Source: RMDB library OK1LIB, as collected in RNAgym. The record gives the reactivity of an RNA of 177 nucleotides to 2A3 and DMS. For DMS the reverse transcriptase was MarathonRT. Conditions: 150 mM KOAc, 10 mM MgCl2 and 150 mM bicine (pH 8.5), 24 C. Values cover nucleotides 27 to 126.

RNA sequence: GGGAACGACUCGAGUAGAGUCGAAAAAGGCUCACUAAUCUGCGGGACGCAGAUCUUGAGGGGGGAGGAGUUAAGAACCCUCUUCUUGCGAUCUUCGUCAGGACUCACCAGCGCUCGGCUCUCGUGAAGUCCAUAUCCUAUUCGUAGGAUAUGGACUAAAAGAAACAACAACAACAAC
Reactivity to 2A3 in 0.01 (KOAc 150mM, MgCl2 10mM, bicine 150mM(pH8.5), 24C), signal-to-noise 9, nucleotides 027 to 126: a000g050g000c000u020c010a050c040u090a050a090u050c030u080g030c050g050g090g020a020c040g000c030a010g000a030u010c010u060u090g030a040g010g010g000g030g020g010a090g070g040a150g090u140u160a120a060g070a110a080c000c000c000u000c000u000u010c000u010u060g040c060g030a040u010c000u050u050c010g020u020c010a030g020g040a030c000u000c030a050c010c020a020g020c020g010c040u020c020g040g010c010u000c010u000c030g080u070g090a070
Reactivity to DMS in 0.01 (KOAc 150mM, MgCl2 10mM, bicine 150mM(pH8.5), 24C), signal-to-noise 5, nucleotides 027 to 126: a090g010g010c020u010c040a050c070u020a080a090u020c020u010g000c030g000g010g000a060c010g010c070a020g000a010u000c010u010u000g000a050g000g000g010g010g000g010a030g000g010a100g000u020u050a130a160g010a200a140c020c010c000u000c000u000u000c010u000u000g000c270g000a020u010c000u010u000c020g000u010c040a150g010g000a080c040u010c040a080c040c050a090g020c070g000c070u000c020g000g000c030u000c000u010c030g020u010g010a120